[RMDB]
Conditions: 150 mM KOAc, 10 mM MgCl2 and 150 mM bicine (pH 8.5), 24 C. The record gives the reactivity of an RNA of 177 nucleotides to 2A3 and DMS. Source: RMDB library OK2TRN, as collected in RNAgym. 2A3 is a SHAPE reagent: it acylates the 2'-hydroxyl of flexible nucleotides of all four kinds.
RNA sequence: GGGAACGACUCGAGUAGAGUCGAAAAGAACUUCAAGCCCUCGUAUGCGUUUGGUAGUGUAACGCUCCUAACUGCCAACACGAUUAGGAGAACGAAGAGAAGAGGCAUCAUGAUCUUGUUUGCCCUCCACUUGGACCGAUUUCGAUCGGUCCAAGUGAAAAGAAACAACAACAACAAC
Reactivity to 2A3 in 0.01 (KOAc 150mM, MgCl2 10mM, bicine 150mM(pH8.5), 24C), signal-to-noise 1, nucleotides 027 to 126: g020a010a010c030u050u050c080a130a080g040c020c010c000u020c050g160u040a000u150g100c040g030u040u030u030g040g010u000a010g010u000g040u050a140a070c080g000c080u020c000c000u040a020a030c000u040g000c010c020a030a030c030a000c110g030a050u060u200a040g000g100a080g000a070a030c150g010a070a000g040a000g050a250a000g030a090g020g000c000a000u030c000a020u080g180a140u080c100u010u050g050u110u100u080g040c000c000c000u080c050
Reactivity to DMS in 0.01 (KOAc 150mM, MgCl2 10mM, bicine 150mM(pH8.5), 24C), signal-to-noise 2, nucleotides 027 to 126: g000a070a120c040u000u000c050a080a230g000c070c010c010u020c060g000u000a030u000g020c050g030u000u000u000g010g020u030a020g000u010g020u020a060a120c040g010c060u000c030c000u000a030a040c030u010g030c010c000a010a010c150a060c040g000a110u010u000a030g040g000a040g010a070a070c120g000a050a050g010a110g000a130a050g020a080g020g000c020a050u010c010a060u010g000a100u000c150u000u000g000u010u000u000g010c030c000c010u000c070

The 2A3 profile rests on 1,072 reads.